[RMDB]
RNA sequence: GGGAACGACUCGAGUAGAGUCGAAAAUAAGCUCCGCACGGAAUGAUUUUUCUGAGCACGUGGCCGUCACAGGGCUGACGUAACACCAGCUGCCAUUGUGGAUAGCAUCCAGGUUGGUAGCACCGGUAAAGAGCGAUGUUUUCGAACAUCGCUCUUUAAAAGAAACAACAACAACAAC
Reactivity to DMS in 0.01 (KOAc 150mM, MgCl2 10mM, bicine 150mM(pH8.5), 24C), signal-to-noise 2, nucleotides 027 to 126: u020a210a100g000c050u010c000c120g000c070a060c060g000g010a070a000u000g050a110u000u060u040u070u000c040u000g010a160g040c140a190c100g000u000g000g000c110c030g030u040c220a030c210a140g020g010g000c010u000g070a090c100g000u020a070a080c260a150c040c030a030g000c050u000g000c000c000a000u030u000g010u040g000g000a000u000a080g000c000a300u000c000c000a010g010g040u020u000g010g030u000a050g010c010a060c210c000g000g000u000
Reactivity to 2A3 in 0.01 (KOAc 150mM, MgCl2 10mM, bicine 150mM(pH8.5), 24C), signal-to-noise 2, nucleotides 027 to 126: u210a040a000g040c050u010c040c010g000c000a080c030g010g060a120a170u140g070a190u000u030u140u050u000c010u030g120a010g040c060a000c020g000u010g020g060c050c050g080u190c000a110c020a150g120g080g000c040u070g090a050c000g030u030a070a000c000a050c040c020a050g000c000u000g000c000c000a010u090u100g220u000g110g000a040u030a110g000c080a030u000c000c000a000g110g020u000u000g010g000u000a000g000c010a080c020c000g020g000u000
The data come from the RNA Mapping Database (RMDB), library RFM100.
Chemical mapping of a 177-nucleotide RNA with DMS and 2A3.
For 2A3 the reverse transcriptase was SuperScript II with manganese.
The RNA was probed in 150 mM KOAc, 10 mM MgCl2 and 150 mM bicine (pH 8.5) at 24 C.
The 2A3 profile rests on 891 reads.
Values cover nucleotides 27 to 126.